[RMDB]
RNA sequence: GGGAACGACUCGAGUAGAGUCGAAAAGGCAGCAGCGCUGCGCCGGCGCAGGGAGGCGCUACAGGGGUCAGUGAUGCCACAGCUGGGGGGCUUCUUGGCAGUGGAGCAAUGGCGUCAGGGGGCUUGGCCCAGAGUACGGUUUCGACCGUACUCUGGGAAAAGAAACAACAACAACAAC
Reactivity to DMS in 0.01 (KOAc 150mM, MgCl2 10mM, bicine 150mM(pH8.5), 24C), signal-to-noise 1, nucleotides 027 to 126: g020g020c020a080g010c040a130g030c130g010c030u000g020c060g010c030c010g020g020c070g000c080a160g030g020g010a140g020g000c040g010c060u000a070c120a120g000g010g000g030u010c050a040g020u010g000a060u010g000c030c050a080c090a100g010c060u000g030g010g000g000g000g060c090u000u010c030u000u000g030g000c040a120g010u020g010g000a050g030c090a070a170u010g010g010c050g000u000c060a070g000g000g000g010g000c100u020u000g000g000